The record gives the reactivity of an RNA of 177 nucleotides to 2A3 and DMS. Conditions: 150 mM KOAc, 10 mM MgCl2 and 150 mM bicine (pH 8.5), 24 C. Reactivities are rounded to 0.1 and cut off at 0 and 3. Source: RMDB library OK1LIB, as collected in RNAgym. The 2A3 profile rests on 39,600 reads.
[RMDB]
RNA sequence: GGGAACGACUCGAGUAGAGUCGAAAAGUUCUCGAAGGAAGGCGAAUGACACCACGUCAUCCAUUUUUUUUAGGUGUCGACGCACGAGAGCAGCGUCAUUUAGGAUGAGUUUUUUUUCUCAUCCGAAGGGUAGGUUGUAGUUCGCUACGACCUACCCAAAAGAAACAACAACAACAAC
Reactivity to 2A3 in 0.01 (KOAc 150mM, MgCl2 10mM, bicine 150mM(pH8.5), 24C), signal-to-noise 9, nucleotides 027 to 126: g010u010u000c010u010c010g040a090a030g030g000a030a030g010g000c000g010a030a030u040g000a000c000a000c000c000a000c010g010u000c000a040u010c010c010a090u120u040u020u020u020u030u100u260a090g000g000u010g000u010c020g000a000c000g050c010a040c090g140a100g020a010g130c150a020g000c010g020u010c050a100u090u090u140a040g000g000a000u010g000a010g000u010u000u010u010u000u010u170u080c000u000c000a000u000c000c000g000a020a020
Reactivity to DMS in 0.01 (KOAc 150mM, MgCl2 10mM, bicine 150mM(pH8.5), 24C), signal-to-noise 6, nucleotides 027 to 126: g010u000u010c000u000c000g010a120a090g000g000a030a040g000g000c010g000a020a030u010g010a010c000a000c000c020a210c030g000u000c000a090u000c030c010a010u000u000u000u020u040u060u060u040a090g010g010u000g000u000c010g020a020c030g020c000a200c080g020a180g010a130g010c160a110g000c000g020u000c000a120u020u010u030a160g000g010a010u000g010a010g000u010u000u000u010u020u020u040u000c000u000c000a000u000c000c010g000a030a090